Chemical mapping of a 177-nucleotide RNA with 2A3 and DMS. The reactions ran in a buffer of 150 mM KOAc, 10 mM MgCl2 and 150 mM bicine (pH 8.5), at 24 C. For 2A3, 1,221 sequencing reads were counted. The data come from the RNA Mapping Database (RMDB), library OK1LIB.
RNA sequence: GGGAACGACUCGAGUAGAGUCGAAAAGGUGGACUUUUACAUAGAUCUCUUCUUGAAUGCUCAAGAAGUAUCGAAGGAGAUAGUGGUCAAGUUCCAUCGAUCCGUCAUAGAUCCUCUCUACGUAAUCCGAGACCCAGAUAUUCGUAUCUGGGUCUCGAAAAGAAACAACAACAACAAC
Reactivity to 2A3 in 0.01 (KOAc 150mM, MgCl2 10mM, bicine 150mM(pH8.5), 24C), signal-to-noise 3, nucleotides 027 to 126: g060g010u000g000g010a020c030u000u050u040u080a080c060a070u130a050g190a070u010c030u000c000u010u050c080u010u090g070a190a020u110g070c000u020c050a080a140g130a270a000g120u000a030u050c030g050a030a000g010g020a000g010a030u030a050g080u060g090g050u060c010a030a000g110u270u140c030c020a000u000c010g010a030u010c020c000g060u090c060a080u080a110g070a060u040c000c030u040c020u030c040u070a050c040g090u110a080a070u060c100
Reactivity to DMS in 0.01 (KOAc 150mM, MgCl2 10mM, bicine 150mM(pH8.5), 24C), signal-to-noise 2, nucleotides 027 to 126: g000g000u000g020g010a000c130u000u000u040u010a140c010a010u000a030g010a000u000c050u070c000u000u000c150u020u010g030a060a090u000g000c130u000c050a150a110g000a170a000g000u000a000u020c020g050a100a060g000g010a020g020a060u000a070g020u020g000g000u060c190a000a060g020u050u030c020c000a030u010c000g000a110u020c010c090g020u020c060a110u020a180g000a020u050c050c040u000c020u060c040u010a060c050g010u000a140a100u000c020